RNA sequence: GGGAACGACUCGAGUAGAGUCGAAAAAUUACUUUCUUUAGCAUUCACAUGACCUGUGAGCAGAUUCUAUUUCUUUUGCUUAUUAGCUGUCAUGGUACCAGAAUGAAGUAUGAGAAACUCUCAGUGCUUUCAUGUUCUCAUCUGUAAACCUGAGACCUGAUGAUGGCUGGUUCGCCAGCCAUCAUCAAAAAGAAACAACAACAACAAC
Reactivity to 2A3 in 0.01 (KOAc 150mM, MgCl2 10mM, bicine 150mM(pH8.5), 24C), signal-to-noise 1, nucleotides 027 to 156: a000u110u060a050c030u040u070u130c020u030u110u070a040g010c000a060u000u030c020a020c000a060u030g000a000c000c000u020g000u000g010a000g030c020a000g030a170u130u090c110u240a230u120u280u130c100u000u180u070u020g030c000u020u020a030u140u170a070g090c180u140g050u000c000a030u000g000g020u080a180c140c160a010g030a040a000u040g020a100a080g040u080a080u080g040a030g080a100a090a050c000u000c000u030c100a030g060u010g140c060u000u200u160c000a040u050g050u200u000c140u000c000a060u000c060u050g130u130a090a000a000c060c000u030g030a000g000a010c000c010
Chemical mapping of a 207-nucleotide RNA with 2A3. The 2A3 profile rests on 304 reads. The RNA was probed in 150 mM KOAc, 10 mM MgCl2 and 150 mM bicine (pH 8.5) at 24 C.